[RMDB]
RNA sequence: GGGAACGACUCGAGUAGAGUCGAAAACCAGCCUCCUCGCUGGCGCCGGCUGGGCAACAUUCCGAGGGGACCGUCCCCUCGGUAAUGGCGAAUGGGACCCACAAACCUCUCUAGAUUCCGAUAGAGACUACGGGGAUGUUCGCAUCCCCGAAAAGAAACAACAACAACAAC
Reactivity to 2A3 in 0.01 (KOAc 150mM, MgCl2 10mM, bicine 150mM(pH8.5), 24C), signal-to-noise 5, nucleotides 027 to 129: c000c000a000g040c000c020u050c000c010u070c060g040c050u050g030g000c040g020c020c010g020g010c040u030g020g010g030c000a050a010c000a050u020u050c000c000g000a000g010g000g010g020a030c040c010g300u300c030c000c010c000u010c000g000g000u000a020a020u020g010g000c020g050a040a020u060g000g020g040a070c000c000c010a040c030a020a090a010c020c000u010c000u000c010u020a030g010a210u100u010c030c020g010a020u030a040g070a010g040a050c040u090a060
Reactivity to DMS in 0.01 (KOAc 150mM, MgCl2 10mM, bicine 150mM(pH8.5), 24C), signal-to-noise 5, nucleotides 027 to 129: c000c030a100g060c050c040u010c020c010u000c140g070c000u010g040g020c050g000c050c000g020g030c060u040g000g010g050c090a140a160c000a040u030u010c010c020g020a040g080g020g020g040a280c210c280g000u020c000c000c000c000u020c030g010g020u040a000a010u060g000g030c070g010a120a080u040g000g000g000a100c000c050c030a060c070a150a080a050c050c070u040c010u010c010u000a050g000a090u020u010c000c080g020a060u040a100g040a090g030a070c130u020a060

Structure probing data (2A3 and DMS) for a 170-nucleotide construct.
The 2A3 profile rests on 11,392 reads.
2A3 adducts were read by reverse transcription with SuperScript II with manganese.